[RMDB]
RNA sequence: GGGAACGACUCGAGUAGAGUCGAAAAAGAGGAACUAUUGGAUAAUGACCAGACAAAACUGAAAGUGUUAGGCAGCUGGAUUCUCCAGGAAUACAAGAACAGAACAUGCCCUCAGUGCUUCAAUAUGGUUGAUAAGUCCAGGCUGGGAAAAGAUGGCCGUUACUUAACGGUUCGCCGUUAAGUAACGAAAAGAAACAACAACAACAAC
Reactivity to DMS in 0.01 (KOAc 150mM, MgCl2 10mM, bicine 150mM(pH8.5), 24C), signal-to-noise 2, nucleotides 027 to 156: a100g010a090g040g000a030a100c060u000a120u000u000g010g000a090u000a060a130u030g020a130c010c020a110g040a190c060a040a040a080a110c040u000g020a060a060a100g020u000g030u000u000a080g030g020c010a090g070c050u000g010g000a160u000u010c020u000c050c130a100g030g010a110a060u010a100c130a060a050g000a060a050c030a080g000a040a060c100a080u000g000c040c010c040u000c060a090g030u000g000c040u010u000c000a060a000u000a150u020g020g000u000u000g020a070u000a040a160g000u010c020c000a040g040g000c030u020g040g000g000a040a000a040a040g010a100u010g010g000c080
Reactivity to 2A3 in 0.01 (KOAc 150mM, MgCl2 10mM, bicine 150mM(pH8.5), 24C), signal-to-noise 3, nucleotides 027 to 156: a000g050a030g020g000a050a030c070u040a110u120u130g030g020a030u030a130a070u130g050a020c000c020a020g040a070c050a030a080a040a020c020u070g040a120a070a020g060u070g020u120u050a010g040g000c020a010g020c040u020g020g040a070u060u030c030u000c040c020a010g020g070a090a060u120a110c060a040a070g040a100a010c010a040g020a090a020c020a050u070g040c020c000c000u070c030a040g020u000g050c060u050u060c030a050a060u100a070u140g000g040u020u060g030a090u050a130a030g030u000c030c020a020g020g020c030u010g040g000g000a010a100a020a020g020a060u050g020g020c020
The data come from the RNA Mapping Database (RMDB), library OK3TST. This 207-nucleotide RNA was probed chemically with DMS and 2A3. The 2A3 profile rests on 2,095 reads. For 2A3 the reverse transcriptase was SuperScript II with manganese. Conditions: 150 mM KOAc, 10 mM MgCl2 and 150 mM bicine (pH 8.5), 24 C.